[RMDB]
RNA sequence: GGGAACGACUCGAGUAGAGUCGAAAAGGGGCUGACUUGGAUUUCGACAGAUUUCUUGUCGCACAGAUAGCAUGCCAAGCGCUGCUUGUAAAACAGCAACAAAAAUAACUGUAAACAACACAGAUUACGCUCCAGCUUACGCUAAAGCUGCGUGAGUGUGAUUGGAUUUCUUCGGAAAUCCAAUCACAAAAGAAACAACAACAACAAC
Reactivity to 2A3 in 0.01 (KOAc 150mM, MgCl2 10mM, bicine 150mM(pH8.5), 24C), signal-to-noise 1, nucleotides 027 to 156: g030g000g000g000c020u000g020a160c000u000u000g090g010a060u130u050u090c010g010a000c030a030g050a130u160u120u140c080u060u160g030u060c020g030c040a220c090a110g080a000u220a070g030c040a020u220g000c000c000a120a030g000c010g000c020u020g020c020u030u050g050u080a030a080a000a140c030a020g120c060a010a100c040a080a150a030a110a020u180a010a010c020u000g020u020a020a000a160c050a020a000c040a000c010a060g060a000u090u160a070c160g010c000u030c030c000a000g000c000u000u000a010c010g000c050u090a170a090a090g020c060u000g000c050g030u030g000a020g000u050